[RMDB]
RNA sequence: GGGAACGACUCGAGUAGAGUCGAAAAUUGCACGGUACUAUUGAAUUCAACAAGAAACAAGUAUCUGUAGAUAAAACCCUCUCUACAAGUUCAAUAAGCCAGGAUGAUGCGACCGACGCUCCGAAUACCUAAUACGUGCAUUCGUGCACGUAUUAGGAAAAGAAACAACAACAACAAC
Reactivity to 2A3 in 0.01 (KOAc 150mM, MgCl2 10mM, bicine 150mM(pH8.5), 24C), signal-to-noise 3, nucleotides 027 to 126: u110u060g010c030a010c080g070g000u050a030c010u030a090u170u090g090a170a120u090u070c060a140a220c020a230a170g030a100a100a030c030a070a010g030u000a020u000c040u040g020u030a040g010a150u140a140a150a040a050c010c030c010u010c010u000c000u010a060c040a140a050g040u000u080c020a020a060u060a170a020g030c020c010a020g050g010a050u050g020a010u040g020c020g030a020c000c050g060a040c040g000c000u000c020c020g100a080a060u070a130
Reactivity to DMS in 0.01 (KOAc 150mM, MgCl2 10mM, bicine 150mM(pH8.5), 24C), signal-to-noise 3, nucleotides 027 to 126: u000u000g010c060a040c080g010g000u000a040c050u020a120u010u000g010a120a120u000u000c080a090a150c200a080a080g010a030a070a120c070a060a050g000u000a020u000c040u000g020u010a040g030a050u000a080a040a140a110c030c010c020u000c130u010c020u010a040c040a060a060g010u000u000c050a040a080u010a030a130g000c020c030a060g010g010a070u010g000a070u010g010c020g000a070c040c060g010a110c080g000c030u000c030c010g000a060a090u020a110
Background: Conditions: 150 mM KOAc, 10 mM MgCl2 and 150 mM bicine (pH 8.5), 24 C. Structure probing data (2A3 and DMS) for a 177-nucleotide construct. The 2A3 profile rests on 1,826 reads. Values are in units of 0.01, from 0 to 300, in steps of 10. For DMS the reverse transcriptase was MarathonRT.